[RMDB]
RNA sequence: GGGAACGACUCGAGUAGAGUCGAAAACCGUAGGUCGUGUCUUAUGGCCACUUGUCAGAUGGAUUUCCAACGGUUCGAAAGAGCGGUUGGCCGGUCAUCUUGGAUUUAGUGGCUUAUCACACGACCUAAACGGAAAAGAGAUACUUCGGUAUCUCAACGUAGCAGCAAGCUUCGGCUUGCUGCUACGAAAAGAAACAACAACAACAAC
Reactivity to 2A3 in 0.01 (KOAc 150mM, MgCl2 10mM, bicine 150mM(pH8.5), 24C), signal-to-noise 1, nucleotides 027 to 156: c000c000g000u000a000g040g000u000c000g030u030g020u010c020u060u150a050u200g050g000c000c040a010c000u030u000g040u000c030a000g010a020u080g130g020a110u120u040u000c030c030a040a010c010g300g000u000u010c040g060a080a080a040g030a020g020c170g150g000u000u030g000g020c050c040g070g020u010c000a010u000c040u150u250g280g030a160u300u300u090a000g000u020g010g000c010u000u000a010u020c010a000c020a000c010g030a000c000c000u000a000a000a000c000g050g030a040a120a080a170g000a000g000a020u060a000c020u050u100c290g120g000u000a000u000c000u010c000a000a010